[RMDB]
RNA sequence: GGGAACGACUCGAGUAGAGUCGAAAACGCAGAUGCUAAGGCUAUUAUUGAGCAGUACCAUUCUGCUUAAGUGAUGCGGAUUUUGACAGAAACCGUGUGGUAAAAGUGCGGUCCUGUUUGGUAUGUAGGUUUAAGAUUAGUUCGCUAAUCUUAAACCAAAAGAAACAACAACAACAAC
Reactivity to 2A3 in 0.01 (KOAc 150mM, MgCl2 10mM, bicine 150mM(pH8.5), 24C), signal-to-noise 7, nucleotides 027 to 126: c020g000c010a020g020a120u100g000c020u070a120a100g160g000c030u040a050u180u030a060u060u150g020a010g000c000a010g000u060a200c040c040a050u130u030c010u010g000c000u010u020a050a000g050u050g080a060u060g000c010g030g020a030u050u070u050u210g050a020c020a020g040a040a040a000c010c010g000u010g020u050g060g070u090a080a080a050a060g060u050g010c010g000g010u010c000c000u040g020u060u100u080g050g020u140a120u170g100u070a060
Reactivity to DMS in 0.01 (KOAc 150mM, MgCl2 10mM, bicine 150mM(pH8.5), 24C), signal-to-noise 7, nucleotides 027 to 126: c070g020c030a040g010a130u000g010c050u010a090a110g020g020c020u000a090u010u000a110u010u020g010a020g010c010a020g010u010a090c160c130a120u010u010c010u000g000c000u000u000a020a050g020u010g000a090u000g010c010g010g000a210u000u000u000u000g010a060c080a040g000a100a090a030c020c010g020u000g010u010g000g010u010a080a060a080a170g010u000g010c020g000g000u000c070c010u000g010u000u000u000g010g010u000a050u000g010u010a120